[RMDB]
RNA sequence: GGGAACGACUCGAGUAGAGUCGAAAAGGGGGCGUAACGGAUUCGACGGGAUUGAAUCGUGGUGGGGAGGCGUGCCGGGUUCCGAGCUCCCGUAAAACGAUCGGAAAACAUAACUGCCAACACGCAGUUUGCAUACGCUGCUUAAUUAAUUAAGUAGGGUAAUACAUGGGUUCGCCCAUGUAUUACCAAAAGAAACAACAACAACAAC
Reactivity to 2A3 in 0.01 (KOAc 150mM, MgCl2 10mM, bicine 150mM(pH8.5), 24C), signal-to-noise 1, nucleotides 027 to 156: g060g000g000g000g000c040g000u080a030a030c020g010g030a000u120u070c040g090a010c040g170g060g110a030u000u230g000a130a110u170c030g020u030g050g030u210g030g000g000g000a040g000g000c020g000u000g000c020c010g110g000g000u050u000c000c020g000a000g020c040u120c030c000c000g020u030a040a040a000a020c020g000a000u000c020g000g000a110a070a000a000c030a000u100a130a000c000u000g060c030c100a090a010c010a030c140g030c000a000g000u000u000u090g030c070a030u020a150c020g010c050u030g000c000u020u010a060a050u270u100a010a110u100u100a040a040g010u020a000g030